[RMDB]
RNA sequence: GGGAACGACUCGAGUAGAGUCGAAAAGAUAUGGAUCCUCGCAUGGGAGCUCCCAGUUCGGAAACGAACUGUGAGAGCGAGGAUCAUGCCGAGGAUCCUAAGUCAAACUGAACGUUCGCGUUCAGAACUAGUCACUAACGUUCGCGUUAGUGACUAGAAAAGAAACAACAACAACAAC
Reactivity to 2A3 in 0.01 (KOAc 150mM, MgCl2 10mM, bicine 150mM(pH8.5), 24C), signal-to-noise 2, nucleotides 027 to 126: g030a020u050a010u180g000g000a010u010c000c010u010c010g000c000a020u010g000g030g000a050g010c000u000c010c000c000a000g000u000u000c020g030g050a040a070a080c000g010a000a000c030u030g080u260g120a300g010a010g060c000g040a120g000g000a000u020c000a000u000g020c030c080g000a000g030g010a000u010c000c000u000a010a000g000u000c050a030a040a150c000u010g000a020a000c010g020u050u120c300g000c000g150u000u000c030a000g000a030a050
Reactivity to DMS in 0.01 (KOAc 150mM, MgCl2 10mM, bicine 150mM(pH8.5), 24C), signal-to-noise 3, nucleotides 027 to 126: g020a080u010a300u010g020g010a000u010c000c000u000c020g010c000a020u000g000g010g000a080g030c000u010c000c000c000a020g010u000u010c000g010g000a170a130a240c000g010a000a020c000u000g000u030g010a170g010a000g030c000g020a060g000g000a070u010c000a000u000g000c080c070g000a020g010g020a010u000c000c000u000a000a090g000u010c040a100a160a250c000u000g000a010a000c000g010u000u010c230g040c000g000u000u000c010a000g000a080a270

Annotation
The record gives the reactivity of an RNA of 177 nucleotides to 2A3 and DMS. The DMS profile rests on 2,796 reads. For 2A3 the reverse transcriptase was SuperScript II with manganese. The RNA was probed in 150 mM KOAc, 10 mM MgCl2 and 150 mM bicine (pH 8.5) at 24 C. It was measured as part of the RMDB library TTRDES. Values are in units of 0.01, from 0 to 300, in steps of 10.